[RMDB]
RNA sequence: GGGAACGACUCGAGUAGAGUCGAAAAUUUUUCUUAUGCGUUAUCCUGGAACUUUGGCGAUGGGGCCGGGAGGGCCAAGCGUAUCAUCGAUCUGUCGGUCGGUAUGGUAAGUGACGCAAGCUGUAUGGUCCAGUGACAUAUUCGUAUGUCACUGGACAAAAGAAACAACAACAACAAC
Reactivity to 2A3 in 0.01 (KOAc 150mM, MgCl2 10mM, bicine 150mM(pH8.5), 24C), signal-to-noise 4, nucleotides 027 to 126: u050u030u010u020u020c010u000u100a030u140g040c010g010u030u060a060u090c040c030u030g010g010a030a050c000u040u080u180g050g000c020g070a100u130g070g040g030g000c040c030g030g040g020a040g030g000g030c010c000a080a030g060c040g010u060a050u070c020a020u050c030g000a020u000c020u120g210u130c020g010g020u010c020g010g070u090a060u040g050g000u050a050a030g050u020g030a000c010g000c010a020a040g020c010u050g030u300a190u150g080
Reactivity to DMS in 0.01 (KOAc 150mM, MgCl2 10mM, bicine 150mM(pH8.5), 24C), signal-to-noise 2, nucleotides 027 to 126: u000u000u000u000u030c010u000u020a090u020g000c000g020u010u030a060u000c020c010u000g000g000a070a050c030u000u000u010g000g000c000g010a100u020g000g000g000g010c010c000g000g030g000a090g010g010g020c020c020a070a100g000c060g030u000a070u030c040a050u010c030g020a020u040c020u070g010u030c130g030g000u010c020g020g010u010a020u000g000g000u030a030a060g020u010g000a080c030g030c020a050a140g050c100u000g010u020a200u010g020
Notes:
The record gives the reactivity of an RNA of 177 nucleotides to 2A3 and DMS. For DMS the reverse transcriptase was MarathonRT. 2A3 adducts were read by reverse transcription with SuperScript II with manganese. It was measured as part of the RMDB libraries RFM100 and RFMREP.